[RMDB]
Source: RMDB library OK2TRN, as collected in RNAgym. Structure probing data (DMS and 2A3) for a 177-nucleotide construct. DMS adducts were read by reverse transcription with MarathonRT. Values are in units of 0.01, from 0 to 300, in steps of 10.

RNA sequence: GGGAACGACUCGAGUAGAGUCGAAAAGUCUCUCAGUCACUGUGACUGUCACUGAGAGUCACUGUGUGAGUCUCUGACACUCUCAGUCAGUCACACUCACUCUGUGUCAGAGAGUCAGUGUGUGUGACACAAAACACAGCUUCGGCUGUGUUUUGUGAAAAGAAACAACAACAACAAC
Reactivity to DMS in 0.01 (KOAc 150mM, MgCl2 10mM, bicine 150mM(pH8.5), 24C), signal-to-noise 4, nucleotides 027 to 126: g020u000c030u000c010u000c050a100g010u000c070a040c030u010g000u010g010a020c040u000g010u000c220a030c090u010g000a020g000a040g020u000c030a020c030u010g020u010g030u000g000a120g000u010c020u010c020u010g010a050c110a100c080u000c060u010c050a070g000u010c080a060g010u010c010a020c010a070c070u000c170a030c070u010c090u000g030u010g020u010c160a120g010a030g000a050g020u010c150a050g020u000g000u010g020u000g010u010g000a100
Reactivity to 2A3 in 0.01 (KOAc 150mM, MgCl2 10mM, bicine 150mM(pH8.5), 24C), signal-to-noise 2, nucleotides 027 to 126: g050u000c010u000c000u000c040a010g080u050c010a050c060u040g000u060g070a020c020u010g030u100c060a040c100u030g000a020g000a010g080u030c020a020c090u170g040u020g060u070g230a120g160u060c030u000c000u090g020a030c010a020c080u030c000u000c020a020g040u010c020a000g000u000c000a000c000a000c020u030c010a040c010u020c020u060g060u050g120u180c060a050g010a000g000a000g190u000c020a050g010u000g000u030g010u030g030u020g080a020